Chemical mapping of a 170-nucleotide RNA with DMS and 2A3.
For 2A3 the reverse transcriptase was SuperScript II with manganese.
DMS adducts were read by reverse transcription with MarathonRT.
The RNA was probed in 150 mM KOAc, 10 mM MgCl2 and 150 mM bicine (pH 8.5) at 24 C.

RNA sequence: GGGAACGACUCGAGUAGAGUCGAAAACCAAUGGCGGGUUUGGUACGAAUGUAUAAUUUGUUAGCAUGCCUUUGGCUUUUACGCAAGUUUUAUCAGCAUGUAAUCAAUGGUUGCAAAGAUACGGCAUAAGCUGUCUGCUUCGGCAGACAGAAAAGAAACAACAACAACAAC
Reactivity to DMS in 0.01 (KOAc 150mM, MgCl2 10mM, bicine 150mM(pH8.5), 24C), signal-to-noise 7, nucleotides 027 to 129: c000c010a150a030u010g020g000c300g040g000g090u000u010u050g030g010u060a040c080g060a040a030u030g030u060a000u010a070a080u050u020u000g030u010u000a140g000c060a000u010g030c030c060u030u010u030g040g030c090u020u000u040u050a110c200g000c020a130a050g020u030u070u000u050a070u030c160a130g020c040a040u020g020u040a060a030u060c040a030a040u000g040g020u020u030g030c110a060a080a100g030a100u050a050c130g000g000c080a070u020a070a040g010
Reactivity to 2A3 in 0.01 (KOAc 150mM, MgCl2 10mM, bicine 150mM(pH8.5), 24C), signal-to-noise 4, nucleotides 027 to 129: c010c010a010a070u070g000g000c040g000g030g020u010u020u030g020g000u040a010c030g050a060a040u110g090u090a000u000a130a080u070u060u050g140u040u040a050g030c020a010u010g000c000c000u060u110u120g040g020c000u060u070u030u230a100c160g020c000a040a020g010u000u080u040u090a060u050c010a010g040c020a020u010g020u130a110a050u060c050a010a000u100g000g080u030u040g040c000a000a120a010g110a050u080a100c140g000g000c050a050u040a140a010g040